[RMDB]
RNA sequence: GGGAACGACUCGAGUAGAGUCGAAAAAAAGAUAUGGAUGUAGCAGAGCUGGAGAAGUCGCGAAGAACUCGCUCGGAAACGAGCGAGGGAGCGACGUAACAGCGACGAAGCUACAUCCUAAGUCAAACUAUGUGAGGAGGUUCGCCUCCUCACAUAGAAAAGAAACAACAACAACAAC
Reactivity to DMS in 0.01 (KOAc 150mM, MgCl2 10mM, bicine 150mM(pH8.5), 24C), signal-to-noise 2, nucleotides 027 to 126: a100a050a070g020a080u020a300u010g000g010a010u000g000u000a000g030c000a050g020a190g000c000u000g000g000a140g010a100a290g000u000c000g000c000g000a140a140g030a170a250c050u000c000g040c000u000c010g010g000a100a110a240c000g000a000g010c000g010a000g000g030g020a050g040c010g000a010c020g000u000a070a150c010a020g000c010g020a180c230g000a090a080g010c000u000a000c000a000u000c000c000u010a000a050g000u000c050a110a070a150
Source: RMDB library TTRDES, as collected in RNAgym. Chemical mapping of a 177-nucleotide RNA with DMS. For DMS the reverse transcriptase was MarathonRT. The DMS profile rests on 1,658 reads. Reactivities are given for positions 27 through 126.